[RMDB]
An RNA of 177 nucleotides, treated with 2A3 and read out base by base. The reactions ran in a buffer of 150 mM KOAc, 10 mM MgCl2 and 150 mM bicine (pH 8.5), at 24 C. The 2A3 profile rests on 793 reads. It was measured as part of the RMDB library OK1LIB.
RNA sequence: GGGAACGACUCGAGUAGAGUCGAAAAGAAGAUGAUGUCACCCGUGACAGUCGAUUCAAUUUCAGUGGUUAUGGGAUGGGUCAUUGUCUCCAGGUCAAAGAUGGCACCGCAGUCAAGGCCACUCCUCGAGGACGGUAUUCUUCGGAAUACCGUCCUCAAAAGAAACAACAACAACAAC
Reactivity to 2A3 in 0.01 (KOAc 150mM, MgCl2 10mM, bicine 150mM(pH8.5), 24C), signal-to-noise 2, nucleotides 027 to 126: g110a030a040g000a010u160g010a090u070g110u010c000a020c020c000c090g070u120g000a000c040a030g060u010c040g070a050u080u080c100a200a290u040u040u090c180a100g040u020g080g110u030u050a040u190g030g000g070a080u000g030g060g030u100c110a110u010u090g000u050c000u000c000c020a060g000g010u040c000a050a030a170g160a070u060g010g000c020a010c080c000g000c060a000g050u100c020a010a080g020g080c000c000a010c010u020c010c030u040c120